[RMDB]
RNA sequence: GGGAACGACUCGAGUAGAGUCGAAAACAACUGAGUUCGCUCAGUUGAAAAGGGGUCGUGGCACGCAGGGAGAUGCCACUGAAGCCUCCACGGUGGACCCAUCGAGGAUCUGCGGCCACGACGGAGGCACCCAAAUACCAUUGCUUCGGCAAUGGUACUUAGGUUAGAGUUUCGACUCUAACCUAAGAAAAGAAACAACAACAACAAC
Reactivity to 2A3 in 0.01 (KOAc 150mM, MgCl2 10mM, bicine 150mM(pH8.5), 24C), signal-to-noise 4, nucleotides 027 to 156: c010a000a000c000u000g000a000g030u120u120c190g140c130u010c010a000g000u000u000g020a060a000a010a010g000g000g000g010u040c010g000u000g000g000c100a060c300g000c010a000g000g020g000a020g000a010u030g030c010c000a000c000u000g040a130a030g000c000c000u000c000c000a000c000g000g010u010g000g030a050c150c200c010a000u010c030g020a300g020g010a020u000c000u000g000c000g000g000c000c000a000c000g010a000c020g000g000a000g000g000c010a030c010c010c000a040a110a010u060a010c000c000a010u000u000g000c010u030u060c210g080g010c000a000a000u000g000g010u000a020
Reactivity to DMS in 0.01 (KOAc 150mM, MgCl2 10mM, bicine 150mM(pH8.5), 24C), signal-to-noise 2, nucleotides 027 to 156: c010a020a000c000u010g000a020g030u010u010c300g020c000u020c000a000g020u000u020g030a040a060a070a130g010g000g030g030u000c020g030u000g000g030c010a060c000g010c000a090g000g040g030a150g020a060u000g000c010c020a060c000u020g000a050a070g000c040c000u000c000c020a300c000g000g010u020g000g020a230c150c300c020a090u000c040g000a210g000g020a070u000c020u010g000c050g020g000c000c010a020c000g030a020c060g010g010a050g090g020c000a140c010c000c000a060a080a190u000a020c000c000a040u000u010g000c000u020u000c300g080g020c000a020a000u010g010g040u000a000